[RMDB]
RNA sequence: GGGAACGACUCGAGUAGAGUCGAAAACAUAGAGAUUUAGAUUUAAGGUUAGAAGAAUUGUGGAAGUCGUGAGACUUCCCUUUUUUUCAUCUUAACGUUUACUAUCCUUCAUUGUUUGAAUGUGCAACAUGAGGUUCUUGUUCGCAAGAACCUCAUGAAAAGAAACAACAACAACAAC
Reactivity to DMS in 0.01 (KOAc 150mM, MgCl2 10mM, bicine 150mM(pH8.5), 24C), signal-to-noise 2, nucleotides 027 to 126: c030a030u040a120g000a050g030a020u000u000u010a000g010a040u000u000u000a020a000g000g020u000u030a110g020a010a030g010a000a010u000u000g010u080g010g000a010a030g010u000c000g010u070g010a280g000a040c000u000u010c000c000c020u010u000u000u000u010u000u000c010a010u010c040u020u000a020a000c300g000u000u000u000a060c110u010a000u000c030c020u000u000c140a220u010u010g000u010u000u020g040a080a060u030g010u000g010c090a040a140
Reactivity to 2A3 in 0.01 (KOAc 150mM, MgCl2 10mM, bicine 150mM(pH8.5), 24C), signal-to-noise 2, nucleotides 027 to 126: c010a010u200a000g090a010g030a090u000u060u070a050g050a070u010u040u040a020a000g000g040u060u180a060g020a000a000g000a010a000u040u030g090u250g080g000a000a020g010u020c040g060u080g030a140g000a020c000u010u010c000c000c000u000u000u000u000u000u000u000c000a000u010c000u000u000a010a000c030g030u020u010u030a060c040u040a080u040c020c010u040u110c070a090u040u080g130u050u020u050g230a300a140u110g000u050g050c070a070a040